[RMDB]
RNA sequence: GGGAACGACUCGAGUAGAGUCGAAAAUUGAAGGUAAAACAGCCUGUGGGUGAAACACACCCACAGGGCCCAUUGGGCGCUAGCACUCUGGUAUCACGGUACCUUUGUACGCCUGUUUUACCGAAGGCACGACUAUUGUUCGCAAUAGUCAAAAGAAACAACAACAACAAC
Reactivity to 2A3 in 0.01 (KOAc 150mM, MgCl2 10mM, bicine 150mM(pH8.5), 24C), signal-to-noise 9, nucleotides 027 to 129: u120u130g070a090a020g000g000u000a000a000a000a000c000a000g000c000c000u000g000u000g000g010g000u010g030a050a090a010c130a000c000a000c050c010c000a000c000a000g000g000g000c000c010c000a030u260u300g000g000g000c010g000c060u080a060g020c020a000c010u010c010u010g010g000u000a000u020c020a030c220g130g000u000a000c000c000u000u000u000g010u010a010c020g000c000c000u000g000u000u000u000u000a000c000c000g000a000a010g070g020c070a010c200
Reactivity to DMS in 0.01 (KOAc 150mM, MgCl2 10mM, bicine 150mM(pH8.5), 24C), signal-to-noise 7, nucleotides 027 to 129: u040u030g030a160a090g000g000u020a000a000a000a000c000a000g010c000c000u000g020u000g000g000g000u020g020a110a150a100c220a190c010a000c010c000c030a000c010a010g010g000g010c000c000c000a030u030u070g010g020g000c000g010c000u030a090g030c060a040c030u010c030u000g000g010u010a010u020c050a120c260g040g020u010a000c000c040u000u000u000g000u010a030c030g000c000c000u000g010u000u000u000u000a010c000c000g010a040a040g000g000c110a100c190